Structure probing data (2A3 and DMS) for a 177-nucleotide construct. The DMS profile rests on 1,561 reads. It was measured as part of the RMDB library OK2TST. For DMS the reverse transcriptase was MarathonRT. Values cover nucleotides 27 to 126. Conditions: 150 mM KOAc, 10 mM MgCl2 and 150 mM bicine (pH 8.5), 24 C.
RNA sequence: GGGAACGACUCGAGUAGAGUCGAAAAUAAGGACGUGAUGAUUCCCAUGGUUAAAGAGCAGGACGAACACCUCUCCCCUGUAGUCGCUGUCAAUCACGCCAGCGCCCACAUCCAAGCCUUGAGUCACCCACUAGGUACGUUUCGACGUACCUAGUGGAAAAGAAACAACAACAACAAC
Reactivity to 2A3 in 0.01 (KOAc 150mM, MgCl2 10mM, bicine 150mM(pH8.5), 24C), signal-to-noise 1, nucleotides 027 to 126: u190a070a050g020g040a010c000g040u030g010a040u010g050a050u090u070c010c000c010a050u070g080g040u110u130a150a030a000g060a020g010c010a030g000g050a040c120g120a110a080c070a060c040c010u040c010u000c000c030c000c000u010g040u060a040g060u050c060g000c040u000g000u040c000a000a040u010c010a000c070g000c000c000a020g010c020g030c000c030c000a020c000a030u000c020c010a000a040g000c020c030u010u050g000a010g020u030c010a050c010
Reactivity to DMS in 0.01 (KOAc 150mM, MgCl2 10mM, bicine 150mM(pH8.5), 24C), signal-to-noise 2, nucleotides 027 to 126: u010a080a090g000g010a040c080g020u010g000a070u000g000a270u000u000c020c010c020a150u010g000g010u000u020a130a100a050g000a070g000c020a050g000g010a120c060g000a130a060c120a100c070c010u000c040u000c010c010c000c020u000g010u010a060g020u000c010g000c040u000g000u010c070a080a080u000c090a040c130g020c130c000a060g020c060g030c040c010c050a050c070a020u020c050c040a040a070g010c090c050u010u010g000a100g010u010c050a150c120